This 207-nucleotide RNA was probed chemically with DMS and 2A3. 2A3 adducts were read by reverse transcription with SuperScript II with manganese. For 2A3, 1,834 sequencing reads were counted. Conditions: 150 mM KOAc, 10 mM MgCl2 and 150 mM bicine (pH 8.5), 24 C.

RNA sequence: GGGAACGACUCGAGUAGAGUCGAAAAGCCUCCUCGCUUCCAUAGAAAGGGGACGGGGCAGAUCGCAAGUGCUACAACCGAGCGGUGGUAUCUGUCAAACUAAGCAGCCACUGCACAUCACUUGACUAAACGAUGCCGAUCUUCGGAUCGGCAUCAAUCAUAUUAUAGCCUUCGGGCUAUAAUAUGAAAAAGAAACAACAACAACAAC
Reactivity to DMS in 0.01 (KOAc 150mM, MgCl2 10mM, bicine 150mM(pH8.5), 24C), signal-to-noise 2, nucleotides 027 to 156: g010c020c010u000c000c000u010c020g010c010u010u000c030c030a120u000a140g000a130a100a150g000g010g000g020a010c000g020g000g010g020c090a100g000a090u010c050g010c000a030a070g040u000g010c050u000a110c070a090a180c100c060g000a150g010c000g030g020u000g020g040u000a040u000c030u020g000u000c050a100a140a200c150u020a040a150g010c010a110g000c000c000a050c010u000g040c010a090c050a060u000c010a030c020u000u000g000a180c080u000a040a140a150c100g000a020u010g000c010c010g030a010u000c010u000u030c300g020g000a030u000c000g020g070c000a000u000c000a020a140
Reactivity to 2A3 in 0.01 (KOAc 150mM, MgCl2 10mM, bicine 150mM(pH8.5), 24C), signal-to-noise 3, nucleotides 027 to 156: g020c000c000u010c000c000u000c010g030c060u060u000c000c010a110u110a180g230a110a160a060g010g000g010g010a000c010g000g000g020g000c030a030g030a140u160c100g000c030a020a000g000u000g040c050u120a110c050a170a080c090c030g060a050g030c010g000g000u010g000g020u160a170u170c020u040g070u120c060a130a120a220c150u160a240a010g020c000a000g000c010c000a000c020u010g020c000a010c010a030u090c020a000c020u070u050g030a040c050u160a070a080a080c090g000a000u000g000c000c000g000a000u010c000u020u060c220g020g000a000u010c000g000g000c000a000u000c000a000a000